[RMDB]
This 177-nucleotide RNA was probed chemically with DMS and 2A3. Conditions: 150 mM KOAc, 10 mM MgCl2 and 150 mM bicine (pH 8.5), 24 C. Values cover nucleotides 27 to 126.

RNA sequence: GGGAACGACUCGAGUAGAGUCGAAAAAAAAGAUAUGGACCACAGCUAUGAAGGAUCAUGCGGAGUGAGGAUCGGAAACGAUCCUCCUCGGAUAGUGAUCUGGAGCUGAAUGGUCCUAAGUCAAAAACUAGACACUAAGGUUCGCCUUAGUGUCUAGAAAAGAAACAACAACAACAAC
Reactivity to DMS in 0.01 (KOAc 150mM, MgCl2 10mM, bicine 150mM(pH8.5), 24C), signal-to-noise 2, nucleotides 027 to 126: a090a050a080a060g010a070u010a300u010g000g000a010c000c000a110c020a000g020c000u000a220u000g000a230a220g010g000a010u000c000a010u000g010c120g000g020a030g030u000g020a010g020g000a010u000c000g000g000a140a060a200c000g010a000u020c010c010u000c010c000u000c010g020g020a080u000a060g000u010g000a030u000c000u010g000g000a060g020c000u010g010a070a070u020g010g000u000c000c000u000a000a100g030u020c070a120a050a060a100a130
Reactivity to 2A3 in 0.01 (KOAc 150mM, MgCl2 10mM, bicine 150mM(pH8.5), 24C), signal-to-noise 1, nucleotides 027 to 126: a000a000a030a000g070a090u110a080u150g000g000a040c000c000a040c010a040g000c030u070a160u300g060a010a020g030g000a010u050c010a010u120g080c210g150g030a030g010u300g030a000g030g010a010u000c010g020g000a060a060a000c020g020a010u040c000c000u000c000c000u030c000g010g030a070u090a050g070u010g010a000u000c010u000g030g020a000g000c020u000g070a150a260u070g020g020u010c000c000u030a120a020g050u000c020a010a030a140a130a130

It was measured as part of the RMDB library TTRDES. For DMS the reverse transcriptase was MarathonRT.